The record gives the reactivity of an RNA of 207 nucleotides to 2A3. The reactions ran in a buffer of 150 mM KOAc, 10 mM MgCl2 and 150 mM bicine (pH 8.5), at 24 C. For 2A3, 660 sequencing reads were counted. It was measured as part of the RMDB library M2RFPK. For 2A3 the reverse transcriptase was SuperScript II with manganese.
[RMDB]
RNA sequence: GGGAACGACUCGAGUAGAGUCGAAAAACGCUUCACAAUGUGCGGCAAAGAAACAUUGUUUAUGCAAAGGCACUUCGCAAUGUGUGCUCAAACAUUGCUUAUUCAAACACGCUUCAGAAUGUGCGACAAAACUUCACGGUCUUCGGACCGUGAAGAAUCCCCGUUAUCACUUCGGUGAUAACGGGGAAAAAGAAACAACAACAACAAC
Reactivity to 2A3 in 0.01 (KOAc 150mM, MgCl2 10mM, bicine 150mM(pH8.5), 24C), signal-to-noise 1, nucleotides 027 to 156: a000c000g000c010u000u000c010a000c000a040a000u000g000u000g000c030g070g050c120a300a000a000g050a050a030a000c000a000u000u020g150u030u130u100a040u090g000c030a090a030a060g190g000c000a000c010u010u020c010g010c000a000a000u020g020u000g070u060g030c060u100c180a070a020a000c000a000u000u000g030c000u040u040a070u080u150c100a000a000a050c090a040c050g100c050u160u160c010a040g060a150a130u100g030u070g010c010g030a030c030a060a070a090a000c000u000u010c000a000c000g000g000u000c000u010u100c040g120g000a000c000c010g000u000g000a000a000g000a000a010